RNA sequence: GGGAACGACUCGAGUAGAGUCGAAAAGAAUGGAGUAUUGACCGCACUGAGAUUUGCGAAUAUGACAAGUUCUCUUGGUCAAACAGAGAAUUGCGAUUAAAUGGCUAAGGUAAAGUCCCUCUAAGGGGAGAGCACAAGAAUUCGUUCUUGUGCUCUCAAAAGAAACAACAACAACAAC
Reactivity to DMS in 0.01 (KOAc 150mM, MgCl2 10mM, bicine 150mM(pH8.5), 24C), signal-to-noise 4, nucleotides 027 to 126: g010a110a100u010g010g010a110g000u000a120u000u000g010a030c020c010g000c260a090c140u000g010a090g010a080u000u010u010g010c010g010a090a140u030a070u010g010a140c070a040a020g000u000u000c020u000c000u000u010g000g020u000c230a070a060a130c060a050g000a050g000a050a050u010u000g020c060g020a080u010u000a050a070a100u020g000g010c040u000a070a060g010g030u010a040a070a100g010u000c000c070c000u010c120u020a100a090g000g010g010
Reactivity to 2A3 in 0.01 (KOAc 150mM, MgCl2 10mM, bicine 150mM(pH8.5), 24C), signal-to-noise 2, nucleotides 027 to 126: g070a030a100u070g040g030a040g020u110a140u020u060g050a030c020c010g000c040a050c110u070g030a020g020a120u020u020u050g010c020g080a120a100u180a120u190g050a080c000a040a060g080u100u020c010u000c000u000u080g010g000u030c000a000a040a060c020a000g040a000g030a100a100u150u130g050c030g050a070u070u100a050a070a110u100g020g010c020u040a020a050g000g000u020a100a000a080g020u020c030c000c030u070c060u070a090a080g050g020g060
This 177-nucleotide RNA was probed chemically with DMS and 2A3. The reactions ran in a buffer of 150 mM KOAc, 10 mM MgCl2 and 150 mM bicine (pH 8.5), at 24 C. It was measured as part of the RMDB library OK2TRN. 2A3 adducts were read by reverse transcription with SuperScript II with manganese.